[RMDB]
RNA sequence: GGGAACGACUCGAGUAGAGUCGAAAACACUAUUCCUAGGACAUUUCCCAGGAAACCAUGCUGCUCCUCAAGCUUUCUCUUCUUCUUUGUCACCUUCUGGAGUUCUUUUUCCAGCUCCUUUUUUCUCUUUCCAAGCUCGACCCAUUGUUCCAGAAUGCUAUUCGACUACGUUCGCGUAGUCGAAUAGAAAAGAAACAACAACAACAAC
Reactivity to 2A3 in 0.01 (KOAc 150mM, MgCl2 10mM, bicine 150mM(pH8.5), 24C), signal-to-noise 1, nucleotides 027 to 156: c050a010c050u100a120u160u060c000c000u060a080g040g010a020c050a140u210u140u050c000c000c060a020g000g080a040a040a050c040c040a070u080g010c010u020g040c000u010c000c030u040c050a060a050g070c000u030u080u100c050u000c000u120u000c000u060u040c010u130u110u090g120u040c050a070c030c000u050u030c050u070g040g000a010g050u150u160c070u120u150u030u070u020c060c000a010g020c040u020c000c000u090u050u010u020u110u040c040u020c000u100u080u080c020c020a050a000g010c050u030c010g010a050c040c020c000a070u000u140g010u030u060c020c000a060g040a100a050u100g020